[RMDB]
RNA sequence: GGGAACGACUCGAGUAGAGUCGAAAAAUGGGCCAAUUCCGAGCGAAGAGACGCGGGGGAAGGGAUCAGUGCCCGAGAGGGGAUAAGUGGCAAAGAGCAUUGGAACGUCGAGAGGACACCUCCCAAGGAUGUCACAUAUGUUCGCAUAUGUGACAUCAAAAGAAACAACAACAACAAC
Reactivity to 2A3 in 0.01 (KOAc 150mM, MgCl2 10mM, bicine 150mM(pH8.5), 24C), signal-to-noise 2, nucleotides 027 to 126: a000u060g020g020g000c030c020a030a070u130u000c030c020g010a010g030c020g060a110a060g100a060g040a100c030g010c040g000g010g000g020g030a000a080g000g010g000a020u070c060a040g060u050g130c000c000c000g040a030g000a000g000g060g000g000a050u040a130a030g010u060g030g000c010a050a020a000g060a020g000c040a060u030u100g050g020a070a060c030g040u060c020g030a050g000a020g100g050a020c020a000c010c020u000c000c000c020a020a020g160
Reactivity to DMS in 0.01 (KOAc 150mM, MgCl2 10mM, bicine 150mM(pH8.5), 24C), signal-to-noise 2, nucleotides 027 to 126: a090u000g000g020g000c000c050a080a150u010u000c010c000g000a220g050c040g010a110a090g000a160g010a060c060g020c050g010g030g000g020g010a080a070g010g010g020a050u020c080a060g000u000g020c010c020c020g000a030g010a100g000g000g000g000a090u000a050a090g010u000g000g000c050a010a090a050g000a090g010c020a080u010u020g010g010a090a090c120g010u000c020g010a080g010a120g000g010a060c070a050c020c050u000c010c020c020a100a140g020
Source information: The record gives the reactivity of an RNA of 177 nucleotides to 2A3 and DMS. The data come from the RNA Mapping Database (RMDB), library VIROID. The reactions ran in a buffer of 150 mM KOAc, 10 mM MgCl2 and 150 mM bicine (pH 8.5), at 24 C. For DMS, 1,358 sequencing reads were counted. High 2A3 reactivity points to a flexible backbone, as in loops and unpaired stretches. High DMS reactivity at an A or C suggests that its Watson-Crick edge is free. 2A3 adducts were read by reverse transcription with SuperScript II with manganese.